[RMDB]
RNA sequence: GGGAACGACUCGAGUAGAGUCGAAAAUUGUGUGUGCUUCGUGGGAUGAGGUGAGGGCGAGAGUCCAUGCAAGGGGACACACACAAAGAGAGAGAGAAGGACGAGUGUGUGUGCGGGCGGUGCAUGGCUACCGCCUCACUUUCGAGUGAGGCGGUAGAAAAGAAACAACAACAACAAC
Reactivity to 2A3 in 0.01 (KOAc 150mM, MgCl2 10mM, bicine 150mM(pH8.5), 24C), signal-to-noise 6, nucleotides 027 to 126: u050u040g020u010g020u010g010u010g050c040u050u080c070g070u100g020g030g030a080u160g020a100g060g060u150g070a140g010g030g020c020g000a110g020a020g080u010c010c010a020u050g020c010a050a060g030g000g020g030a000c010a000c000a000c000a000c010a000a110a010g120a010g000a010g010a010g010a010g030a140a110g090g030a020c060g010a100g040u050g010u010g000u010g010u020g050c040g000g030g040c080g010g000u040g000c030a020u010g020g000
Reactivity to DMS in 0.01 (KOAc 150mM, MgCl2 10mM, bicine 150mM(pH8.5), 24C), signal-to-noise 4, nucleotides 027 to 126: u020u010g020u010g010u010g010u000g020c040u010u010c030g000u010g000g000g010a130u030g000a070g010g020u010g000a090g020g010g010c070g020a130g000a120g000u010c020c000a020u020g000c020a060a060g010g000g010g010a120c020a010c010a000c010a000c000a040a070a130g000a060g030a190g000a100g020a090g010a090a080g000g010a080c070g000a210g000u000g000u000g000u000g010u010g010c110g000g000g000c100g000g000u000g000c010a010u000g000g000